[RMDB]
RNA sequence: GGGAACGACUCGAGUAGAGUCGAAAAAGUUCGCGCUUCCGUGAAACGCGAAAAUCGGACGGUGGCCGCAAGUCGCAUCGCAAAACCGCGGCAAGUGGAGUUAGCGAGAGGAGGCUGGGUUUUGGCUAGAACACACGGUACUUCGGUACCGUGUGAAGUCCUAUAUCCUAUUCGUAGGAUAUAGGACAAAAGAAACAACAACAACAAC
Reactivity to 2A3 in 0.01 (KOAc 150mM, MgCl2 10mM, bicine 150mM(pH8.5), 24C), signal-to-noise 5, nucleotides 027 to 156: a000g110u070u040c010g000c000g000c080u110u040c070c060g080u100g090a150a050a020c020g010c010g060a030a000a000a060u120c030g020g030a020c000g010g060u040g040g010c040c010g020c050a040a040g020u040c010g050c060a060u050c070g020c090a050a050a060a030c050c040g030c010g050g020c090a060a020g030u040g040g020a080g010u070u100a030g040c020g010a020g000a040g060g020a030g010g020c030u030g020g020g050u040u030u050u110g040g020c030u040a080g080a160a000c000a000c000a000c010g010g000u000a000c000u020u050c140g090g000u000a000c000c000g000u000g000u000g000a000a000
Reactivity to DMS in 0.01 (KOAc 150mM, MgCl2 10mM, bicine 150mM(pH8.5), 24C), signal-to-noise 2, nucleotides 027 to 156: a100g010u000u000c000g020c020g010c000u000u000c020c170g000u000g010a040a020a020c010g010c010g000a000a030a080a060u010c070g030g010a080c030g000g010u010g020g000c010c020g020c070a060a140g020u000c010g000c020a150u000c040g030c050a050a070a070a140c030c100g000c020g030g010c070a060a090g010u000g000g010a130g010u000u000a160g000c040g000a060g000a120g000g010a070g010g030c050u020g020g000g020u000u000u000u000g000g010c080u000a120g010a110a220c010a010c010a020c030g000g020u000a000c000u000u010c260g060g030u000a000c000c000g000u000g000u000g000a010a080
Chemical mapping of a 207-nucleotide RNA with 2A3 and DMS. For 2A3, 4,020 sequencing reads were counted. DMS adducts were read by reverse transcription with MarathonRT.